[RMDB]
RNA sequence: GGGAACGACUCGAGUAGAGUCGAAAAGGGCUACGCGGUGACGCUCAUGGACGUGUUCGGCGAGGAGUGCAUCCGGACCACUCGGACCCACGCCAAAUUCGUGACCAUAACCAACGAGGAGCACACUUUCACCAUUUCGAGCACGGCGAACCUCAACCUUCUGGACUAGGUUCGCCUAGUCCAGAAGAAAAGAAACAACAACAACAAC
Reactivity to 2A3 in 0.01 (KOAc 150mM, MgCl2 10mM, bicine 150mM(pH8.5), 24C), signal-to-noise 5, nucleotides 027 to 156: g050g010g020c060u120a040c050g000c020g050g050u020g040a040c080g040c060u050c050a050u030g020g020a020c030g010u010g010u050u050c030g020g020c020g000a060g010g040a100g030u120g060c040a070u030c000c010g040g030a110c050c050a100c080u080c050g000g030a050c000c010c010a020c010g000c000c010a050a080a040u100u040c020g010u030g130a090c020c030a080u120a110a090c020c020a030a090c050g030a050g080g010a010g030c030a010c010a020c030u050u160u140c050a080c060c020a090u080u090u120c110g030a060g020c050a030c050g070g000c020g040a040a040c000c010u040c020a010a070c000
Reactivity to DMS in 0.01 (KOAc 150mM, MgCl2 10mM, bicine 150mM(pH8.5), 24C), signal-to-noise 2, nucleotides 027 to 156: g010g020g100c010u010a100c040g010c010g070g060u010g000a160c040g050c130u000c090a110u000g010g040a090c020g000u010g040u000u010c090g030g100c030g040a190g030g010a050g010u030g030c090a200u000c060c070g010g040a260c150c070a060c060u010c040g020g030a090c060c040c090a060c010g000c020c020a040a110a060u000u000c030g010u000g020a140c030c020a070u000a060a040c060c030a070a120c100g000a110g010g010a040g010c020a060c030a060c080u000u000u000c040a060c020c010a170u000u030u000c120g020a080g020c050a050c070g000g020c010g020a040a050c010c020u000c090a070a130c120